[RMDB]
RNA sequence: GGGAACGACUCGAGUAGAGUCGAAAAGAUAUGGACGUAGAGCAACAGCUACUGAUCGGAAACGAUCAGGUAGACAUGCUUGAGGUCCUAAGUCAAAGCGUAAAUAGGCUUCGGCCUAUUUACGCAACUGUGUACAGAACUUCGGUUCUGUACACAGAAAAGAAACAACAACAACAAC
Reactivity to 2A3 in 0.01 (KOAc 150mM, MgCl2 10mM, bicine 150mM(pH8.5), 24C), signal-to-noise 3, nucleotides 027 to 126: g010a000u020a010u090g000g000a000c010g000u040a010g000a000g000c070a070a270c160a300g010c010u000a000c000u010g000a000u000c000g020g010a010a000a010c010g000a000u010c000a000g060g030u000a000g010a040c040a170u100g000c010u010u030g030a060g070g000u010c000c000u000a010a000g010u000c050a080a130a050g000c000g000u010a000a010a000u010a000g010g000c020u050u080c300g060g000c020c000u000a000u000u000u000a000c000g000c000a000a000
Reactivity to DMS in 0.01 (KOAc 150mM, MgCl2 10mM, bicine 150mM(pH8.5), 24C), signal-to-noise 4, nucleotides 027 to 126: g010a010u000a100u010g000g010a000c010g000u000a300g000a000g000c010a030a080c300a130g000c010u000a010c000u000g000a000u000c000g020g000a050a030a040c010g010a000u000c000a010g000g010u010a000g000a060c120a120u020g010c000u000u000g000a200g000g000u000c000c000u000a020a080g000u010c020a080a070a120g000c000g020u000a000a000a000u010a000g000g000c000u000u010c210g020g000c010c000u000a000u000u000u000a000c000g010c010a000a020
An RNA of 177 nucleotides, treated with 2A3 and DMS and read out base by base. For 2A3, 9,264 sequencing reads were counted. DMS adducts were read by reverse transcription with MarathonRT. High 2A3 reactivity points to a flexible backbone, as in loops and unpaired stretches.